An RNA of 177 nucleotides, treated with DMS and 2A3 and read out base by base. 2A3 adducts were read by reverse transcription with SuperScript II with manganese.
RNA sequence: GGGAACGACUCGAGUAGAGUCGAAAAACCACAUGCGAUGAACAUGGUGGCGCAAGGACGAGGAAAGUCCGGACUCCACAGAGCACGGUGAUUGUUAACAACAACCCGGGGUGACCCGCGGGCAAGUAUAUCAUACAUAAUUCGUUAUGUAUGAUAUAAAAGAAACAACAACAACAAC
Reactivity to DMS in 0.01 (KOAc 150mM, MgCl2 10mM, bicine 150mM(pH8.5), 24C), signal-to-noise 9, nucleotides 027 to 126: a100c000c000a220c060a040u010g000c020g000a120u030g000a120a090c050a030u010g000g020u000g010g010c070g020c090a170a120g000g010a020c010g010a170g020g010a100a100a130g000u000c000c010g010g000a260c070u000c010c020a040c070a110g000a110g010c070a050c080g000g010u000g000a100u000u000g000u000u010a080a070c150a090a100c100a070a080c020c010c010g000g000g010g010u030g000a170c040c010c010g010c130g000g000g000c130a050a080g010u010
Reactivity to 2A3 in 0.01 (KOAc 150mM, MgCl2 10mM, bicine 150mM(pH8.5), 24C), signal-to-noise 9, nucleotides 027 to 126: a000c020c000a050c000a030u060g020c020g120a110u100g050a100a020c020a050u080g080g010u010g020g000c030g000c060a080a080g010g000a020c020g040a050g180g300a180a070a010g020u000c000c000g000g010a030c020u010c000c000a010c020a040g050a010g040c050a020c090g030g020u050g050a230u040u060g040u060u080a110a040c090a030a010c010a010a030c020c000c000g000g010g000g040u090g080a140c000c000c010g070c090g010g010g010c030a080a000g030u010
Source information
Source: RMDB libraries RFM100 and RFMREP, as collected in RNAgym.